[RMDB]
RNA sequence: GGGAACGACUCGAGUAGAGUCGAAAACCUACUCAAUACGUCCUCGUCGUACAGAACGGUAACAUGUUUUCCGAACAUCCGCGCUUGGGUAUACGAGUAUACACCUUACCCCACCCUCGCCAACGGGAGUGCAUCCACGAGUUCGCUCGUGGAUGAAGUGAAGCACCUUGUUCGCAAGGUGCUUCACAAAAGAAACAACAACAACAAC
Reactivity to 2A3 in 0.01 (KOAc 150mM, MgCl2 10mM, bicine 150mM(pH8.5), 24C), signal-to-noise 1, nucleotides 027 to 156: c000c040u000a000c140u080c010a050a100u040a120c070g110u130c000c060u040c050g030u050c040g010u010a020c040a070g010a110a020c010g050g000u140a180a050c010a130u030g040u110u100u170u040c040c050g030a040a040c030a010u040c040c020g010c010g050c090u050u100g040g000g120u050a110u040a200c060g010a020g060u080a020u040a120c140a090c060c090u170u210a090c000c000c000c000a040c000c000c000u060c010g060c000c050a000a240c040g050g010g020a050g000u070g060c010a000u040c000c000a000c000g000a000g020u080u000c120g000c100u040c000g040u000g000g000a000u000g000a000a000

The record gives the reactivity of an RNA of 207 nucleotides to 2A3. The RNA was probed in 150 mM KOAc, 10 mM MgCl2 and 150 mM bicine (pH 8.5) at 24 C. High 2A3 reactivity points to a flexible backbone, as in loops and unpaired stretches.